[RMDB]
RNA sequence: GGGAACGACUCGAGUAGAGUCGAAAAUGAACAUUAAUUGAGCACCACUAGCUGCCAAGCAGCCAAGCACCCUAUAUCUGGGAGAUGUAGAAUUUAAGGCUGUGUAGUCACUGUCCUCAAGCUGCUCGAUCCCUAUUGCCUUCGGGCAAUAGGGAUCAAAAGAAACAACAACAACAAC
Reactivity to DMS in 0.01 (KOAc 150mM, MgCl2 10mM, bicine 150mM(pH8.5), 24C), signal-to-noise 1, nucleotides 027 to 126: u030g010a030a110c040a060u010u000a090a040u000u010g000a070g020c050a040c100c050a150c060u000a100g020c050u000g010c030c200a070a150g000c010a010g010c000c030a050a120g000c100a060c180c000c000u010a040u000a010u020c040u030g000g010g030a080g020a020u000g010u000a020g040a050a030u000u000u010a110a170g000g020c010u000g030u000g010u000a160g000u000c070a040c060u000g030u010c030c050u000c010a040a040g010c090u000g040c010u000c050
Reactivity to 2A3 in 0.01 (KOAc 150mM, MgCl2 10mM, bicine 150mM(pH8.5), 24C), signal-to-noise 2, nucleotides 027 to 126: u060g050a080a010c080a090u130u170a100a120u150u120g020a000g070c020a010c090c000a040c060u030a040g000c060u010g030c000c000a040a070g020c000a000g000c020c000a020a060g040c020a080c000c000c020u070a060u000a010u170c070u060g120g300g020a190g010a040u040g020u020a040g020a160a100u110u030u190a130a060g020g050c020u030g010u040g010u070a020g030u010c010a010c110u030g040u080c020c010u040c040a050a000g050c040u020g000c030u000c060